[RMDB]
RNA sequence: GGGAACGACUCGAGUAGAGUCGAAAACGAGACGUGCUCGACUGGCGGGCGGAGCUACACGAGCGCCGAGUCCGCCACUGCGCAGAGCUUCGAGCAUCGCAUGGCGCAGCUGCAAAACACGAUGAACGCCCUGCCGCUAGUUCGCUAGCGGCAGGGCAAAAGAAACAACAACAACAAC
Reactivity to 2A3 in 0.01 (KOAc 150mM, MgCl2 10mM, bicine 150mM(pH8.5), 24C), signal-to-noise 1, nucleotides 027 to 126: c030g010a010g000a040c000g070u000g000c000u000c050g000a030c030u010g060g090c000g000g000g020c000g060g020a120g000c030u070a140c150a070c260g220a050g020c060g070c090c000g000a000g030u000c000c000g000c000c000a000c060u030g050c020g030c090a020g000a000g170c010u030u070c160g020a040g040c060a010u090c000g030c140a160u220g100g000c000g000c040a080g000c000u170g040c000a000a000a150a000c000a040c090g000a000u200g030a150a000c000